The data come from the RNA Mapping Database (RMDB), library OK2TST. Chemical mapping of a 177-nucleotide RNA with DMS and 2A3. For 2A3 the reverse transcriptase was SuperScript II with manganese. The 2A3 profile rests on 2,650 reads.

RNA sequence: GGGAACGACUCGAGUAGAGUCGAAAAUAUGCUAUAACAAAAAGAUGUCAUUUCUCUAAGAUGCCGUUUUUUAAUGGGAGUGAUUUCACUGUCGGAAAUAUUGAUAUAAACAAACUUAUGUCUACACGAAUAUUCUAGGUUUCGACCUAGAAUAUUCAAAAGAAACAACAACAACAAC
Reactivity to DMS in 0.01 (KOAc 150mM, MgCl2 10mM, bicine 150mM(pH8.5), 24C), signal-to-noise 3, nucleotides 027 to 126: u010a050u010g020c050u000a080u010a130a100c060a050a060a050a080a070g000a020u000g010u000c010a030u010u010u020c110u030c140u010a100a070g000a040u000g000c040c020g010u000u000u000u010u010u000a060a090u000g000g000g000a030g020u000g020a160u000u010u010c030a060c080u010g000u000c050g010g010a070a040a060u000a080u010u000g000a030u000a020u000a020a030a140c060a090a090a080c180u010u010a020u010g010u000c010u000a100c240a060c160
Reactivity to 2A3 in 0.01 (KOAc 150mM, MgCl2 10mM, bicine 150mM(pH8.5), 24C), signal-to-noise 3, nucleotides 027 to 126: u150a040u060g000c010u060a040u070a300a090c080a050a190a030a000a000g030a010u030g020u030c000a040u020u180u040c100u010c010u080a080a020g030a070u010g000c020c000g050u010u020u000u010u030u200a090a100u060g010g000g010a000g010u010g040a120u010u150u250c020a030c050u120g180u080c030g030g090a050a140a010u160a040u040u150g000a010u070a000u110a080a080a010c060a080a050a130c020u040u040a010u090g020u000c010u090a030c070a000c100